About this RNA:
Structure probing data (DMS) for a 177-nucleotide construct. Conditions: 150 mM KOAc, 10 mM MgCl2 and 150 mM bicine (pH 8.5), 24 C. Source: RMDB library OK2TST, as collected in RNAgym. The DMS profile rests on 876 reads. High DMS reactivity at an A or C suggests that its Watson-Crick edge is free. DMS adducts were read by reverse transcription with MarathonRT.

RNA sequence: GGGAACGACUCGAGUAGAGUCGAAAAGUGAUGGUUGCACAACAGUGUUGAUAUACUUAAUGCAUUUGAAAGUGGCUAAAAUGGGCCGGGUGCGGUGGCUCAUGCCUCUAAUCCCAGCACCUUGGGAGGGUAGGCAUUAUUUCGAUAAUGCCUACCCAAAAGAAACAACAACAACAAC
Reactivity to DMS in 0.01 (KOAc 150mM, MgCl2 10mM, bicine 150mM(pH8.5), 24C), signal-to-noise 1, nucleotides 027 to 126: g010u010g000a150u000g010g030u010u020g000c030a030c030a050a200c210a060g020u020g040u020u000g010a110u020a070u010a060c050u000u000a100a080u000g030c040a030u010u000u000g050a090a120a110g020u000g020g000c030u040a000a050a120a070u010g000g000g000c020c060g020g000g010u010g000c180g000g030u000g010g050c030u000c130a090u000g000c000c010u020c030u020a030a160u000c020c020c020a040g000c090a040c020c010u010u000g010g010g030a080